Chemical mapping of a 177-nucleotide RNA with 2A3. Values cover nucleotides 27 to 126. Source: RMDB library OK1LIB, as collected in RNAgym. 2A3 adducts were read by reverse transcription with SuperScript II with manganese. Conditions: 150 mM KOAc, 10 mM MgCl2 and 150 mM bicine (pH 8.5), 24 C.
RNA sequence: GGGAACGACUCGAGUAGAGUCGAAAAGCGGUGUCCGCGCGCAGGACUAGAACGUCGUAACUGUCCGUUUCUGGUUCCGAGACGAUGACAGGCUUUCGCCUCAAGUCGCAGUCGAUCGUGGUGCCGCCGUCCACCAUGCCUUCGGGCAUGGUGGACGAAAAGAAACAACAACAACAAC
Reactivity to 2A3 in 0.01 (KOAc 150mM, MgCl2 10mM, bicine 150mM(pH8.5), 24C), signal-to-noise 2, nucleotides 027 to 126: g000c010g080g000u020g080u040c000c010g010c000g000c010g010c030a020g000g000a000c000u000a000g000a000a000c000g060u040c020g030u120a090a060c070u190g090u070c050c040g040u000u140u090c020u000g040g000u190u140c000c030g030a050g000a010c030g030a010u060g000a010c020a020g000g000c000u210u300u190c170g000c000c000u000c070a060a050g030u000c000g060c110a010g010u120c010g020a130u020c000g000u020g000g080u040g000c000c000g000c000